Background: The record gives the reactivity of an RNA of 207 nucleotides to 2A3 and DMS. 2A3 adducts were read by reverse transcription with SuperScript II with manganese. For DMS the reverse transcriptase was MarathonRT. Source: RMDB library OK3TST, as collected in RNAgym. The RNA was probed in 150 mM KOAc, 10 mM MgCl2 and 150 mM bicine (pH 8.5) at 24 C.
RNA sequence: GGGAACGACUCGAGUAGAGUCGAAAAGUACGUGAGCCAGCAGAACAGCGACGCCCACAAACAGGCGGAUCUGUUCCUCAAGGCGCAGGGGCAAGGCCACAACCAGCAGGAGGAUCGGAACGCUCGCGAGAUGGCAGAACGCCAGGCGCAGCAGUCCAGGAAUCAGAAAUUUCGAUUUCUGAUUCCUAAAAGAAACAACAACAACAAC
Reactivity to 2A3 in 0.01 (KOAc 150mM, MgCl2 10mM, bicine 150mM(pH8.5), 24C), signal-to-noise 2, nucleotides 027 to 156: g060u050a030c090g050u050g020a030g020c010c020a010g040c030a080g030a020a000c000a000g010c030g030a000c010g040c000c040c030a110c140a030a210a000c070a020g030g000c000g030g020a010u010c000u010g010u000u020c010c000u080c050a030a060g040g000c020g000c010a030g020g020g020g000c030a060a050g020g000c000c030a050c040a040a050c030c000a020g050c020a020g040g000a020g010g020a050u170c060g020g020a060a030c040g000c050u040c040g010c020g010a160g040a060u020g000g000c000a030g080a270a030c070g000c010c000a010g060g020c010g020c000a010g020c000a010g050u060c020c010
Reactivity to DMS in 0.01 (KOAc 150mM, MgCl2 10mM, bicine 150mM(pH8.5), 24C), signal-to-noise 1, nucleotides 027 to 156: g000u000a070c020g010u030g020a050g000c000c010a110g070c300a030g010a050a090c020a020g020c000g010a300c010g010c000c000c020a250c100a070a130a230c190a030g000g000c010g010g020a120u000c020u000g000u020u000c010c000u010c010a250a110g020g030c040g030c010a020g020g000g060g000c040a100a140g040g000c060c080a060c030a080a110c020c000a050g050c040a100g020g050a120g060g010a090u000c070g020g000a060a040c070g020c030u000c060g030c050g000a140g020a070u000g020g020c040a060g000a100a200c060g010c010c020a020g040g000c000g010c060a020g020c010a100g030u000c060c060